[RMDB]
RNA sequence: GGGAACGACUCGAGUAGAGUCGAAAAGCAGCUCGCAGCACACCUUCGUGUUGCAACAUCCGCGGAUAAGCAAAAGACAAUAAUUCAGCAAUUCGCUGACCGGCAUCAGGUUGAGUCGGUUGCCACGGUGAUAGCACCAGUUCGCUGGUGCUAUCACAAAAGAAACAACAACAACAAC
Reactivity to DMS in 0.01 (KOAc 150mM, MgCl2 10mM, bicine 150mM(pH8.5), 24C), signal-to-noise 1, nucleotides 027 to 126: g000c070a000g000c080u000c070g000c080a080g000c080a050c130a120c180c180u000u000c080g020u000g010u010u000g010c020a070a030c060a100u010c010c100g000c040g030g000a050u030a030a130g010c030a010a050a050a120g000a030c120a070a070u000a080a070u000u000c030a020g000c000a110a170u030u010c120g010c050u000g010a030c060c010g000g000c010a100u000c090a050g030g000u030u000g020a090g010u000c030g010g000u020u000g000c010c080a030c250g000
Reactivity to 2A3 in 0.01 (KOAc 150mM, MgCl2 10mM, bicine 150mM(pH8.5), 24C), signal-to-noise 1, nucleotides 027 to 126: g000c020a000g010c050u090c070g000c020a000g000c000a000c000a040c040c030u070u270c200g020u010g020u010u020g000c000a010a020c010a070u000c000c020g000c080g020g000a100u110a200a030g040c060a040a100a000a050g110a030c090a060a150u160a120a150u060u060c030a010g060c010a040a220u150u110c070g020c000u000g040a060c000c020g040g020c020a260u050c010a060g300g060u210u130g030a020g000u000c050g010g070u070u000g020c010c000a060c060g020